[RMDB]
RNA sequence: GGGAACGACUCGAGUAGAGUCGAAAAUACGGGCGGUACGGGCAGUACGGGCAGUACGGGGUGCAGCCGGGUGGGUACUACGGUCAGCAGGGUGCUCAGCAGGCCGCGGGACUGCAGUCGCCCGGCCGAUGAUAACGAAAUUCGUUUCGUUAUCAUCAAAAGAAACAACAACAACAAC
Reactivity to 2A3 in 0.01 (KOAc 150mM, MgCl2 10mM, bicine 150mM(pH8.5), 24C), signal-to-noise 9, nucleotides 027 to 126: u190a030c030g010g020g010c050g040g020u100a120c020g030g120g000c040a030g030u090a020c010g020g130g010c020a020g030u050a060c050g020g010g000g080u130g050c030a010g030c020c000g010g020g030u080g010g030g020u030a030c020u040a060c030g070g030u100c040a030g020c010a040g070g040g030u040g010c020u020c050a030g050c000a010g040g020c010c020g050c040g040g040g020a010c010u030g000c020a020g030u030c010g010c000c000c010g000g000c010c010
Reactivity to DMS in 0.01 (KOAc 150mM, MgCl2 10mM, bicine 150mM(pH8.5), 24C), signal-to-noise 9, nucleotides 027 to 126: u010a110c090g010g010g020c040g010g020u000a060c050g010g010g020c040a100g030u010a030c050g010g010g010c040a060g010u000a050c060g010g010g010g020u010g010c060a080g010c010c020g000g010g010u000g010g010g010u000a020c030u000a080c060g010g010u010c110a110g010c070a110g010g000g000u000g000c030u000c030a060g010c030a090g000g010c000c020g010c040g000g010g000a030c010u000g000c030a140g010u000c020g000c000c000c000g000g000c050c050

This 177-nucleotide RNA was probed chemically with 2A3 and DMS. The 2A3 profile rests on 41,792 reads. Conditions: 150 mM KOAc, 10 mM MgCl2 and 150 mM bicine (pH 8.5), 24 C. For DMS the reverse transcriptase was MarathonRT.